[RMDB]
RNA sequence: GGGAACGACUCGAGUAGAGUCGAAAAGGGAUGUACCGCGCUUGAAAACUAUUUGCCACGUAUGAGUCUUCUCCCAUAGACCCGCUCACAUCGAUAACCUCAUGCGCAAAUUCACCUAUUGCCAUCGAUGGGGUAGCGGCAUACCCACUUCGUUGCAUAUCUGCACAAAAUUCGUUUUGUGCAGAUAAAAAGAAACAACAACAACAAC
Reactivity to DMS in 0.01 (KOAc 150mM, MgCl2 10mM, bicine 150mM(pH8.5), 24C), signal-to-noise 2, nucleotides 027 to 156: g000g020g020a100u000g030u000a080c010c060g000c020g020c010u010u020g010a070a060a120a150c110u000a150u000u010u000g030c000c050a060c030g020u010a060u010g000a040g000u000c010u000u000c030u000c020c020c020a100u010a180g020a100c100c030c030g000c010u040c030a100c000a070u000c000g050a090u000a030a090c110c100u010c020a030u000g000c000g060c030a070a050a170u000u010c030a070c040c010u000a110u000u000g010c020c030a070u010c040g000a020u000g020g030g060g040u020a020g050c000g020g000c090a120u010a110c010c000c010a090c070u020u000c070g010u000u000g000c020a180
Reactivity to 2A3 in 0.01 (KOAc 150mM, MgCl2 10mM, bicine 150mM(pH8.5), 24C), signal-to-noise 4, nucleotides 027 to 156: g010g010g010a020u040g020u120a080c040c030g040c020g030c050u050u130g050a070a060a050a060c050u060a150u170u090u080g060c050c010a060c050g090u120a120u160g040a030g020u000c010u060u020c030u040c000c000c000a010u060a040g050a070c000c000c000g020c020u040c010a080c000a040u020c010g040a040u050a130a080c010c070u120c050a050u110g020c010g000c080a010a050a070u160u130c060a110c060c020u100a090u080u090g030c020c010a010u010c020g020a020u020g000g000g020g030u010a020g010c010g010g000c000a010u130a080c010c000c010a060c030u070u110c070g040u000u020g000c010a010
Description:
Chemical mapping of a 207-nucleotide RNA with DMS and 2A3. The 2A3 profile rests on 2,707 reads. For DMS the reverse transcriptase was MarathonRT. It was measured as part of the RMDB library OK3TST. The reactions ran in a buffer of 150 mM KOAc, 10 mM MgCl2 and 150 mM bicine (pH 8.5), at 24 C. Reactivities are given for positions 27 through 156.